[RMDB]
RNA sequence: GGGAACGACUCGAGUAGAGUCGAAAAAGUUAGGUUCGCUAUGGUGCAACUCUUUAAGGCAAUAACGAACUAAUUCUAAGCAAGUAAUGGAGAAAUGCCAAGGUCACUAUCUAGCCAUAAUAGUGCUGUAAGUGACUUAGAUUCGUCUAAGUCACAAGUACACAGCAUACUUCGGUAUGCUGUGUACAAAAGAAACAACAACAACAAC
Reactivity to DMS in 0.01 (KOAc 150mM, MgCl2 10mM, bicine 150mM(pH8.5), 24C), signal-to-noise 2, nucleotides 027 to 156: a060g000u010u000a080g030g020u010u010c010g040c010u000a030u000g040g050u000g000c020a110a110c090u010c100u010u000u000a080a080g010g000c020a080a040u010a010a020c030g020a020a040c010u010a040a050u010u000c080u010a090a100g020c060a070a090g010u000a070a090u010g040g000a120g000a090a040a100u010g020c040c040a060a090g010g020u000c040a040c030u000a060u000c030u000a060g010c100c070a080u010a050a040u000a120g020u000g020c020u000g010u010a060a170g020u010g000a030c000u000u010a000g000a070u000u000c300g000u000c000u000a000a000g000u010c010a000c010a000a190
Reactivity to 2A3 in 0.01 (KOAc 150mM, MgCl2 10mM, bicine 150mM(pH8.5), 24C), signal-to-noise 6, nucleotides 027 to 156: a000g110u070u050a050g010g100u020u000c010g000c030u030a040u070g170g050u100g050c050a120a190c070u060c080u150u220u170a130a040g050g000c020a030a030u050a070a040c000g010a010a000c030u050a010a030u080u060c060u080a070a010g030c040a040a060g030u140a100a070u090g090g020a070g030a100a100a030u090g030c030c010a040a040g030g010u080c010a010c020u020a040u100c030u040a020g030c010c000a010u040a120a050u050a060g070u060g020c050u030g020u110a170a080g000u010g000a000c000u000u000a000g000a000u020u050c140g010u000c190u000a000a000g010u000c000a000c000a000a000
The record gives the reactivity of an RNA of 207 nucleotides to DMS and 2A3. 2A3 adducts were read by reverse transcription with SuperScript II with manganese. The 2A3 profile rests on 3,979 reads.